Structure probing data (2A3 and DMS) for a 177-nucleotide construct. The DMS profile rests on 927 reads. Reactivities are given for positions 27 through 126. For 2A3, 1,082 sequencing reads were counted. It was measured as part of the RMDB library OK2TST. For DMS the reverse transcriptase was MarathonRT.
[RMDB]
RNA sequence: GGGAACGACUCGAGUAGAGUCGAAAAGAUAGAGACGCGAGUUGGCUAUCGGUAAUUUUCGCACUUGCCUCAAAUAAACAUCUGAACUGGAGUCACUACCCAGAAACACCGAGAUGGUGUAGUGAUGCUGCCGUACUGAAUUCGUUCAGUACGGCAGAAAAGAAACAACAACAACAAC
Reactivity to 2A3 in 0.01 (KOAc 150mM, MgCl2 10mM, bicine 150mM(pH8.5), 24C), signal-to-noise 2, nucleotides 027 to 126: g010a020u050a020g040a010g060a050c030g000c060g060a010g040u060u050g140g100c010u030a040u060c000g020g020u100a060a040u040u150u020u060c060g000c000a050c030u010u080g010c000c000u050c050a080a080a120u160a040a110a050c090a130u020c020u040g030a010a100c050u080g080g060a010g000u000c020a000c040u000a000c040c020c000a000g160a100a090a000c030a010c130c070g020a040g020a190u150g050g000u090g000u020a010g010u030g040a060u120g000
Reactivity to DMS in 0.01 (KOAc 150mM, MgCl2 10mM, bicine 150mM(pH8.5), 24C), signal-to-noise 2, nucleotides 027 to 126: g020a040u000a040g010a300g010a030c040g010c180g000a120g010u000u000g040g000c040u000a140u000c030g010g000u030a050a110u000u020u000u000c060g020c070a040c100u000u000g020c030c040u000c160a040a040a100u000a040a140a110c190a040u000c020u000g000a080a130c110u010g000g000a070g000u000c020a020c030u010a070c050c020c000a100g010a080a060a040c080a090c080c040g010a070g010a160u000g020g010u010g030u000a000g010u000g010a060u020g010